An RNA of 177 nucleotides, treated with 2A3 and DMS and read out base by base.
Conditions: 150 mM KOAc, 10 mM MgCl2 and 150 mM bicine (pH 8.5), 24 C.
For DMS the reverse transcriptase was MarathonRT.
Source: RMDB library OK2TST, as collected in RNAgym.
[RMDB]
RNA sequence: GGGAACGACUCGAGUAGAGUCGAAAAGGUUCAUUUAUUGCUCGCGUAUCAAAAGGUCGUACAGUUCGUGAAUUCUUAAUCGCUGUUUUGAUUGUUCCAACAGUAGUAACAACGGUUUGGAUGUCAGUAACAGUCGAGUAUUCGUACUCGACUGUUAAAAAGAAACAACAACAACAAC
Reactivity to 2A3 in 0.01 (KOAc 150mM, MgCl2 10mM, bicine 150mM(pH8.5), 24C), signal-to-noise 1, nucleotides 027 to 126: g050g010u040u050c020a000u090u060u180a160u080u020g080c030u040c050g050c020g070u110a090u100c110a060a270a000a030g150g010u010c040g010u030a060c030a000g000u000u070c040g060u010g100a080a080u080u020c010u060u130a090a040u090c030g020c000u000g060u110u050u020u050g070a060u000u240g000u150u020c000c030a000a000c030a030g070u150a010g030u080a080a050c000a030a000c070g000g110u000u120u000g070g010a030u070g100u100c000a030g060
Reactivity to DMS in 0.01 (KOAc 150mM, MgCl2 10mM, bicine 150mM(pH8.5), 24C), signal-to-noise 4, nucleotides 027 to 126: g030g010u000u010c030a060u000u000u000a060u020u000g000c080u010c060g020c060g020u010a060u000c120a070a080a110a140g000g010u000c030g020u000a060c090a080g010u000u000c080g010u000g010a070a040u000u000c030u000u000a050a050u010c030g010c030u000g010u000u000u000u020g000a050u000u000g020u010u010c160c110a080a050c040a060g010u000a050g010u000a060a050c100a040a040c040g010g010u000u010u000g000g010a040u010g010u000c070a130g000